[RMDB]
RNA sequence: GGGAACGACUCGAGUAGAGUCGAAAAAAGGGGGACUCCGGGACUCCCUGCAGGCUGGGCACGAAGCCCCCACCGGGCGCUCCCCUCGGCGGGCCGUCCGUUGGGUUCACACCCCCAGGCCGCGGGCACACCUUGAUCUUCGGAUCAAGGAAAAGAAACAACAACAACAAC
Reactivity to 2A3 in 0.01 (KOAc 150mM, MgCl2 10mM, bicine 150mM(pH8.5), 24C), signal-to-noise 8, nucleotides 027 to 129: a000a000g020g000g000g000g000a010c010u000c030c020g020g000g020a020c030u030c000c010c010u020g020c020a060g020g000c010u060g000g000g010c070a020c140g060a070a020g020c010c030c000c000c000a010c010c010g000g000g000c010g010c030u180c010c010c010c010u100c060g220g030c120g010g000g010c040c010g010u010c000c000g010u010u020g000g010g000u050u060c040a050c010a020c030c000c000c000c000a010g060g060c020c000g010c020g010g010g000c040a040c000a010
Reactivity to DMS in 0.01 (KOAc 150mM, MgCl2 10mM, bicine 150mM(pH8.5), 24C), signal-to-noise 9, nucleotides 027 to 129: a040a020g030g010g010g010g000a070c020u020c040c020g000g010g010a130c060u020c050c010c010u030g020c050a070g000g020c110u030g020g000g050c110a110c130g040a190a110g030c120c110c000c010c010a050c020c010g020g010g020c050g000c060u060c010c020c010c020u060c110g050g030c110g000g030g000c300c020g000u020c000c000g000u020u000g010g010g030u040u040c090a120c130a220c050c070c010c010c020a050g030g010c000c030g030c040g000g000g030c240a080c140a130